Source information
Structure probing data (2A3) for a 207-nucleotide construct.
RNA sequence: GGGAACGACUCGAGUAGAGUCGAAAACCAGGACCCUUUUAUCAAGAAACAAUGCAGCUUCUACAUUUGUGCUGCUUCUACACCAAAACAGCUGGAAUGUAUAUAGUAUGGUUCUGGAUGCUCUUGUAUACCUCACUCUUCAUUUCUCACCUAACCAUCCUCGCUAAAUGUUCGCAUUUAGCGAGGAAAAAGAAACAACAACAACAAC
Reactivity to 2A3 in 0.01 (KOAc 150mM, MgCl2 10mM, bicine 150mM(pH8.5), 24C), signal-to-noise 2, nucleotides 027 to 156: c000c000a020g000g050a010c000c000c030u010u120u060u030a220u300c150a070a050g100a090a160a010c120a060a140u190g000c010a000g010c010u170u110c060u130a110c150a210u080u160u180g070u070g010c010u000g020c000u000u000c010u010a000c000a040c020c000a000a010a130a190c020a010g050c010u100g050g040a070a050u040g050u000a010u000a000u010a220g110u020a060u210g050g000u010u000c010u000g050g000a070u060g010c010u020c000u090u040g080u000a130u020a050c000c010u000c040a020c010u040c000u030u030c050a070u060u100u030c060u000c010a030c000c070u070a040a020c020c000a060
High 2A3 reactivity points to a flexible backbone, as in loops and unpaired stretches.